[RMDB]
RNA sequence: GGGAACGACUCGAGUAGAGUCGAAAAGAUAUGGAGAGCGCUAUGAAGUUGCGUAACAUCUGUCGGAAACGACAGUGGCAAUGGAGCGUUCUCCUAAGUCAAACGCACGACCUUCGGGUCGUGCGAACGAGAAGAUCUGGUUCGCCAGAUCUUCUCGAAAAGAAACAACAACAACAAC
Reactivity to 2A3 in 0.01 (KOAc 150mM, MgCl2 10mM, bicine 150mM(pH8.5), 24C), signal-to-noise 1, nucleotides 027 to 126: g010a010u060a020u160g000g000a000g010a000g050c000g000c020u060a300u300g020a050a030g030u000u000g000c000g020u050a060a030c040a300u150c030u000g010u010c010g040g040a090a030a000c000g000a010c010a000g000u000g020g000c000a050a020u070g010g010a010g000c000g000u000u010c000u030c000c000u000a020a000g030u000c020a050a110a090c030g000c000a000c000g000a000c020c040u050u120c300g140g000g000u000c000g000u000g000c010g000a010a010
Reactivity to DMS in 0.01 (KOAc 150mM, MgCl2 10mM, bicine 150mM(pH8.5), 24C), signal-to-noise 2, nucleotides 027 to 126: g000a010u000a300u000g010g000a000g000a010g010c010g020c030u000a300u010g000a170a230g000u000u000g000c000g000u010a030a060c110a010u000c010u010g000u000c000g030g000a050a070a120c000g010a020c000a000g000u000g000g000c010a000a020u020g010g000a010g030c010g000u000u000c000u010c000c000u000a000a070g000u000c020a070a090a210c010g020c010a000c000g000a030c000c000u000u010c170g030g010g020u000c010g010u000g000c020g010a000a010